[RMDB]
RNA sequence: GGGAACGACUCGAGUAGAGUCGAAAAGAUAUGGACGCUGAAGGAGAGGCCUAACUAUUCGGAAACGAACGAAUUAGGCUACCCACCUCUCAGCGUCCUAAGUCAAACGCCCAGUUCGCUGGGCGAAGAUUAUAUCUACGUUCGCGUAGAUAUAAUCAAAAGAAACAACAACAACAAC
Reactivity to DMS in 0.01 (KOAc 150mM, MgCl2 10mM, bicine 150mM(pH8.5), 24C), signal-to-noise 8, nucleotides 027 to 126: g010a040u000a300u010g000g000a020c010g030c000u000g000a040a010g010g000a120g030a140g010g010c010c000u000a000a010c110u010a300u000u000c010g010g000a090a100a160c010g000a010a020c100g010a050a070u000u000a010g010g010c000u000a040c160c070c080a120c020c000u000c180u000c000a000g010c000g010u000c000c000u000a000a050g010u000c040a080a100a190c040g010c000c000c000a010g010u000u010c200g020c010u000g000g000g010c000g000a010a030
Reactivity to 2A3 in 0.01 (KOAc 150mM, MgCl2 10mM, bicine 150mM(pH8.5), 24C), signal-to-noise 6, nucleotides 027 to 126: g020a010u060a040u140g000g000a000c010g000c010u000g010a030a010g060g010a060g030a060g120g040c010c010u010a030a020c060u040a070u060u030c000g010g040a070a090a100c020g010a030a010c040g040a160a270u010u000a010g000g010c000u060a070c030c010c010a110c010c010u050c010u000c010a000g010c000g000u000c000c000u000a000a000g010u000c020a050a040a060c020g000c000c010c000a010g020u060u070c300g000c110u010g000g000g000c000g000a020a000